[RMDB]
RNA sequence: GGGAACGACUCGAGUAGAGUCGAAAACCAUGCCGACCCGAAGAGGAAGAAGAGGACAUGGACGCGAACCGUGAGUGGAACCCUCGAUCCUUUAUUGGGGGGUACACUCGAGGAGUGGAAGGCGGGUUCUAAUUACCUCGUUCGCGAGGUAAUUAGAAAAAGAAACAACAACAACAAC
Reactivity to DMS in 0.01 (KOAc 150mM, MgCl2 10mM, bicine 150mM(pH8.5), 24C), signal-to-noise 1, nucleotides 027 to 126: c030c000a070u020g010c070c010g000a150c050c020c030g030a110a070g010a130g020g000a080a050g010a100a120g010a060g010g000a070c080a050u000g030g000a010c050g000c070g010a070a130c000c060g010u030g080a000g000u000g000g000a130a230c030c000c000u000c000g010a020u000c220c130u000u020u000a030u000u000g000g000g020g040g010g030u010a020c020a010c000u000c020g000a090g010g000a080g010u000g010g010a070a060g040g000c020g000g010g040u010
Reactivity to 2A3 in 0.01 (KOAc 150mM, MgCl2 10mM, bicine 150mM(pH8.5), 24C), signal-to-noise 1, nucleotides 027 to 126: c000c000a000u050g000c040c000g070a080c000c020c030g110a150a060g040a090g150g000a040a040g090a000a000g120a050g030g000a010c000a020u050g000g050a010c010g000c000g080a040a020c010c000g060u030g000a010g000u010g030g040a070a010c000c010c010u020c000g030a020u100c030c110u160u300u160a030u040u070g000g000g000g010g020g000u080a000c000a010c000u070c000g000a030g000g010a050g020u180g000g030a020a040g030g050c060g010g010g020u000